[RMDB]
RNA sequence: GGGAACGACUCGAGUAGAGUCGAAAAAAAAGAUAUGGAGAAGCCUACCCACCUCUCACUGCGGACUAUUUCAGUCGGAAACGACUGAAACGAAUCCGUUGAGAGAGGGCUUCUCCUAAGUCAAAAACCAAUAUUUUAGGUUCGCCUAAAAUAUUGGAAAAGAAACAACAACAACAAC
Reactivity to 2A3 in 0.01 (KOAc 150mM, MgCl2 10mM, bicine 150mM(pH8.5), 24C), signal-to-noise 1, nucleotides 027 to 126: a000a040a040a080g120a080u190a110u170g030g010a010g000a000a000g010c010c000u060a070c210c000c000a030c000c010u000c000u000c010a040c090u190g000c000g010g020a050c090u020a040u000u030u000c000a010g030u000c000g040g040a050a050a020c020g000a020c000u000g000a000a010a000c020g040a110a300u000c000c000g000u010u000g000a020g030a000g000a000g000g000g000c010u000u030c000u000c000c000u000a000a000g060u060c000a000a020a080a150a150
Reactivity to DMS in 0.01 (KOAc 150mM, MgCl2 10mM, bicine 150mM(pH8.5), 24C), signal-to-noise 2, nucleotides 027 to 126: a030a080a080a100g000a050u000a140u010g000g010a010g010a010a010g030c000c020u020a180c000c020c080a300c100c000u010c000u000c000a030c300u000g010c020g000g000a010c080u000a200u010u000u000c010a000g000u000c010g010g010a080a040a120c010g000a010c000u010g000a000a000a010c130g010a060a070u000c000c000g010u000u000g000a000g020a010g000a110g000g000g020c020u000u000c000u000c000c000u000a000a040g010u000c070a030a040a110a090a140